[RMDB]
RNA sequence: GGGAACGACUCGAGUAGAGUCGAAAAGCGAGUUUGUUCGCAAACUCGCAAAGAAAGCUCGAGCGAAGGGAACCCAAACCACGCUCGAGCAAGGGACGCAAAAAAUCUACGGCUUCGGCCGUAGAAACCAACUAGUAUGGUUCGCCAUACUAGUUGGAAAAGAAACAACAACAACAAC
Reactivity to DMS in 0.01 (KOAc 150mM, MgCl2 10mM, bicine 150mM(pH8.5), 24C), signal-to-noise 3, nucleotides 027 to 126: g020c010g010a010g000u000u000u000g010u000u020c180g050c010a010a000a010c000u010c000g030c000a040a040a080g010a150a140a150g030c010u010c010g000a000g010c000g020a190a090g000g000g000a060a140c040c050c040a050a120a110c010c000a180c020g000c000u000c010g010a000g010c010a020a050g000g010g000a030c100g010c260a000a040a050a050a130a070u010c000u010a000c000g000g010c010u000u010c280g030g020c000c000g000u010a000g010a000a040a070
Reactivity to 2A3 in 0.01 (KOAc 150mM, MgCl2 10mM, bicine 150mM(pH8.5), 24C), signal-to-noise 4, nucleotides 027 to 126: g000c000g000a000g000u000u000u010g020u030u030c040g000c050a000a000a000c010u010c000g000c000a010a010a010g020a030a090a000g000c000u000c000g000a000g010c010g090a140a110g040g020g030a080a100c030c020c000a060a020a030c000c000a030c030g000c000u000c000g000a000g010c010a000a000g040g010g000a020c050g010c150a040a070a040a020a040a090u000c000u010a000c010g000g030c010u040u080c200g130g000c000c000g000u000a000g000a000a000a000
Chemical mapping of a 177-nucleotide RNA with DMS and 2A3. The data come from the RNA Mapping Database (RMDB), library M2PK50. For 2A3, 8,971 sequencing reads were counted.